[RMDB]
RNA sequence: GGGAACGACUCGAGUAGAGUCGAAAAGAGACUGAACACCUCUACAAUUUUUCUCGAUAGUGCAAUGGAGGUCUGCAUGUACAUACAGAGGGAAUUCAAUAAACCUUUACUGGCUAUCAGUAAUACUAGUUUUUAUACCUUAUGGCAGGGUAAUACACAGUAUAAUGCAGUUCGCUGCAUUAUACUGAAAAGAAACAACAACAACAAC
Reactivity to 2A3 in 0.01 (KOAc 150mM, MgCl2 10mM, bicine 150mM(pH8.5), 24C), signal-to-noise 4, nucleotides 027 to 156: g010a000g020a010c030u030g010a050a050c010a010c070c000u000c020u080a060c150a150a130u060u050u020u160u070c060u020c050g070a100u070a060g030u060g040c010a060a120u110g040g010a040g030g020u010c000u030g020c020a080u080g040u150a040c030a070u090a050c030a030g040a030g030g010g060a050a050u090u070c020a020a030u060a210a050a040c020c000u030u030u050a010c020u030g030g040c030u070a090u280c030a020g020u050a020a010u030a130c050u040a030g000u000u000u000u070u060a110u030a070c010c000u110u120a070u110g080g000c010a010g080g000g000u020a040a030u110a070c100a010
Reactivity to DMS in 0.01 (KOAc 150mM, MgCl2 10mM, bicine 150mM(pH8.5), 24C), signal-to-noise 2, nucleotides 027 to 156: g020a060g010a200c030u000g010a120a120c040a260c050c000u010c000u020a140c100a070a090u010u000u010u010u010c000u000c040g030a130u000a110g000u010g030c010a100a110u000g000g000a060g020g010u000c030u000g030c050a070u010g030u010a010c050a100u000a040c030a090g020a100g000g000g010a090a130u000u000c060a100a120u010a070a010a070c050c050u000u000u000a040c040u010g020g000c100u010a180u010c020a050g010u000a050a060u010a050c100u000a070g030u010u000u000u000u000a070u000a150c020c020u000u000a080u000g010g000c070a050g030g010g040u040a050a050u010a110c090a110